[RMDB]
RNA sequence: GGGAACGACUCGAGUAGAGUCGAAAAUUGAACGGAUUCGUCCGUUCAACGCGUGCGAUCCAAACGUAGUACUAAAGUACAGACGAAAGCACAAGGAUCAAAUGAUACAGCCGUUCGCGGCUGUAAACUACUAUUACUCGUUCGCGAGUAAUAGUAGAAAAGAAACAACAACAACAAC
Reactivity to DMS in 0.01 (KOAc 150mM, MgCl2 10mM, bicine 150mM(pH8.5), 24C), signal-to-noise 9, nucleotides 027 to 126: u000u000g000a010a000c010g010g010a040u000u010c220g020u000c000c000g000u000u000c000a010a020c160g010c150g010u000g010c090g010a060u000c020c010a070a090a190c030g010u000a070g010u000a020c010u010a070a100a170g010u000a010c010a090g010a070c050g000a100a070a120g010c050a040c110a110a130g010g000a030u000c030a090a090a070u010g010a180u000a010c000a000g010c000c000g010u000u010c240g020c020g020g010c000u000g010u000a000a050a160
Reactivity to 2A3 in 0.01 (KOAc 150mM, MgCl2 10mM, bicine 150mM(pH8.5), 24C), signal-to-noise 9, nucleotides 027 to 126: u010u010g000a000a000c000g000g020a000u040u070c170g060u010c040c000g000u000u000c000a010a000c030g050c030g030u060g020c040g020a020u010c020c000a080a020a050c040g020u030a020g020u000a030c020u230a210a160a120g010u010a010c010a060g140a050c040g100a190a080a030g050c030a040c050a100a080g030g000a030u050c040a030a060a070u160g040a030u020a050c000a000g010c020c010g020u060u110c240g010c010g090g000c000u000g000u010a000a000a000